[RMDB]
RNA sequence: GGGAACGACUCGAGUAGAGUCGAAAAACUACUUACUCUAAUGGAGGACAAAGCUGUAACAGAAGAAAUUCAAACAAUACAGAGAUACAUUGUGAUGGAGGGUUUCGUUUCAUCUCCAGAAAUGCCACACCUCUCACGAAUUCGUUCGUGAGAGGUGAAAAGAAACAACAACAACAAC
Reactivity to DMS in 0.01 (KOAc 150mM, MgCl2 10mM, bicine 150mM(pH8.5), 24C), signal-to-noise 1, nucleotides 027 to 126: a060c040u010a080c080u000u000a080c030u000c000u010a100a040u000g020g000a040g000g000a110c090a070a100a110g000c000u000g000u010a020a170c060a170g020a080a030g000a080a060a050u020u000c040a030a020a100c160a050a120u020a070c050a050g010a110g050a080u010a040c130a040u010u000g000u000g000a160u010g000g000a040g030g010g010u000u000u010c070g030u000u000u000c010a040u000c020u000c060c080a120g000a050a010a060u000g010c030c080a110
Reactivity to 2A3 in 0.01 (KOAc 150mM, MgCl2 10mM, bicine 150mM(pH8.5), 24C), signal-to-noise 1, nucleotides 027 to 126: a020c040u120a010c050u100u050a060c000u010c040u190a210a130u130g040g030a050g000g010a020c020a040a170a010g070c010u020g020u090a110a060c040a120g070a060a010g040a020a130a010u090u110c030a140a040a080c020a000a040u070a030c060a010g030a000g050a050u070a180c020a070u050u050g020u040g020a120u070g020g010a010g000g150g020u070u110u160c020g010u000u000u050c070a120u050c040u010c000c000a020g030a010a020a000u100g020c020c000a010